[RMDB]
Notes:
Structure probing data (2A3 and DMS) for a 177-nucleotide construct. Source: RMDB library OK2TST, as collected in RNAgym. For DMS the reverse transcriptase was MarathonRT. The 2A3 profile rests on 16,507 reads.
RNA sequence: GGGAACGACUCGAGUAGAGUCGAAAAGUAAGCAUCGUAUGGGUCAGCGGCGACAUCGUCGAGCGAGCCGAUGACCGUACGGACCGCGAUGGUCUCGGUGCGGCGGUCGUCAUCGCGGCCGAUCAGCGUAAGACCAAUUGUUCGCAAUUGGUCUUACAAAAGAAACAACAACAACAAC
Reactivity to 2A3 in 0.01 (KOAc 150mM, MgCl2 10mM, bicine 150mM(pH8.5), 24C), signal-to-noise 7, nucleotides 027 to 126: g140u140a080a010g050c030a050u130c070g050u140a050u130g140g000g020u020c060a040g020c000g010g000c010g030a030c020a060u070c020g070u040c060g020a070g100c090g040a050g020c020c010g010a040u150g010a000c000c010g000u020a040c000g010g040a080c040c040g090c080g050a050u100g020g020u020c020u020c030g010g000u100g030c000g000g000c010g020g020u040c090g010u020c010a030u030c030g000c000g000g000c000c010g030a050u060c020a010g040c020
Reactivity to DMS in 0.01 (KOAc 150mM, MgCl2 10mM, bicine 150mM(pH8.5), 24C), signal-to-noise 6, nucleotides 027 to 126: g020u010a090a120g020c080a060u010c090g020u000a050u010g000g020g000u000c010a080g050c010g000g000c050g000a080c130a080u000c040g000u010c070g010a100g000c120g020a220g010c030c010g000a030u000g010a030c000c000g010u000a030c050g010g010a050c130c090g000c080g000a060u000g000g010u000c010u000c030g010g010u000g010c020g000g010c010g010g010u000c100g020u020c040a030u000c050g010c000g000g010c020c010g000a050u000c080a110g000c190